[RMDB]
RNA sequence: GGGAACGACUCGAGUAGAGUCGAAAAAACUCAGCUAGGGAGAGUAUAACAUUCAUGUUGACGAGACCUAGACGAAACACAGAGGAAAAUUAUUAAUCACAGGAUAGUAUUAGUAAUGACUCUGUGUAAAACUCUUCUACGUUCGCGUAGAAGAGAACAACCUAUAAUAGUUCGCUAUUAUAGGUUGAAAAGAAACAACAACAACAAC
Reactivity to DMS in 0.01 (KOAc 150mM, MgCl2 10mM, bicine 150mM(pH8.5), 24C), signal-to-noise 3, nucleotides 027 to 156: a050a060c030u000c010a030g000c030u000a010g000g010g000a220g010a190g020u000a070u010a070a050c020a100u000u000c140a100u010g010u010u000g010a090c010g000a300g020a030c010c000u000a090g010a240c090g000a110a070a020c000a020c000a030g020a040g000g000a100a090a090a040u000u000a000u000u000a010a040u010c090a230c090a190g060g030a240u000a120g010u010a020u000u000a010g010u000a000a010u000g000a160c000u000c010u000g040u010g010u000a020a020a050a140c010u000c010u000u000c000u000a010c010g020u010u000c300g030c000g040u000a020g000a010a000g000a010g010a030a080
Reactivity to 2A3 in 0.01 (KOAc 150mM, MgCl2 10mM, bicine 150mM(pH8.5), 24C), signal-to-noise 4, nucleotides 027 to 156: a000a000c020u020c010a010g010c000u010a000g000g030g000a040g010a030g040u100a140u090a300a020c030a030u100u160c070a080u260g020u040u020g040a030c030g020a020g040a080c000c000u000a010g010a040c020g000a010a040a000c000a000c010a000g010a020g000g060a120a100a100a000u010u000a010u010u010a010a010u050c050a010c030a090g240g090a170u220a140g050u050a010u000u000a000g010u000a000a010u000g010a010c000u000c010u000g000u000g000u000a000a000a000a010c000u000c000u010u010c000u000a000c010g010u010u030c200g010c000g090u000a000g000a000a000g000a000g000a000a010
Source information:
The record gives the reactivity of an RNA of 207 nucleotides to DMS and 2A3. It was measured as part of the RMDB library M2RFPK. For 2A3 the reverse transcriptase was SuperScript II with manganese.